[RMDB]
RNA sequence: GGGAACGACUCGAGUAGAGUCGAAAACGGUUACGCCUUCUUUACCGUUAUCAAGGAAGGUACUCGGCCAUGCUAAGGGAAGCAUUAUUCCUUAGGCGCAUGUCGCCGCCAGCAUGGUGUGAGGGGAUACGACCACUAUUUUCGAAUAGUGGUCGUAAAAAGAAACAACAACAACAAC
Reactivity to DMS in 0.01 (KOAc 150mM, MgCl2 10mM, bicine 150mM(pH8.5), 24C), signal-to-noise 4, nucleotides 027 to 126: c030g010g000u000u010a050c090g000c000c000u000u000c000u000u010u010a020c010c010g000u030u040a010u010c230a020a000g010g010a010a010g020g020u000a040c030u000c010g000g000c000c000a020u000g020c000u000a230a110g000g000g010a030a040g020c300a140u040u050a110u000u000c000c010u000u010a110g010g010c000g020c040a110u000g010u040c010g010c010c000g040c200c150a040g010c000a000u000g000g010u000g010u010g010a010g010g000g010g000a180
Reactivity to 2A3 in 0.01 (KOAc 150mM, MgCl2 10mM, bicine 150mM(pH8.5), 24C), signal-to-noise 9, nucleotides 027 to 126: c010g000g000u020u010a030c060g010c000c010u000u000c010u010u030u030a020c020c020g300u130u110a050u070c060a010a000g050g000a000a010g000g010u030a030c000u000c000g020g000c000c000a000u000g000c010u050a060a080g020g000g020a020a020g030c080a220u130u110a110u140u140c000c010u030u060a070g010g000c000g010c040a160u240g110u300c040g010c030c010g020c030c020a000g010c000a000u000g000g020u050g110u140g040a010g000g050g040g010a030
An RNA of 177 nucleotides, treated with DMS and 2A3 and read out base by base. DMS adducts were read by reverse transcription with MarathonRT. Conditions: 150 mM KOAc, 10 mM MgCl2 and 150 mM bicine (pH 8.5), 24 C. The data come from the RNA Mapping Database (RMDB), libraries RFM100 and RFMREP. For 2A3 the reverse transcriptase was SuperScript II with manganese.